Chemical mapping of a 177-nucleotide RNA with 2A3. For 2A3 the reverse transcriptase was SuperScript II with manganese. The 2A3 profile rests on 1,129 reads. Values are in units of 0.01, from 0 to 300, in steps of 10. Conditions: 150 mM KOAc, 10 mM MgCl2 and 150 mM bicine (pH 8.5), 24 C.
[RMDB]
RNA sequence: GGGAACGACUCGAGUAGAGUCGAAAAGCGCUGGCUAUCUGUGGCCCGACUCGGUGUCAACAGUAAAGUUGCUGCCUUUGUGAUGGUCAGCUUAUUUUUAAUAACUUUUUCCAUGUUAUAAAGGCAGGGAUAAUAUUUUAUUCGUAAAAUAUUAUCCAAAAGAAACAACAACAACAAC
Reactivity to 2A3 in 0.01 (KOAc 150mM, MgCl2 10mM, bicine 150mM(pH8.5), 24C), signal-to-noise 1, nucleotides 027 to 126: g070c040g000c030u000g010g000c000u000a010u020c000u010g020u010g010g000c000c000c000g300a300c190u170c290g000g000u300g000u000c060a190a000c000a060g000u230a040a140a040g010u020u000g010c000u000g000c010c000u000u000u010g020u010g010a030u050g020g000u000c010a010g010c010u010u020a040u010u070u010u030u050a070a090u080a020a030c030u080u090u000u040u000c000c010a030u090g080u190u120a120u050a050a010a000g010g000c000a010g000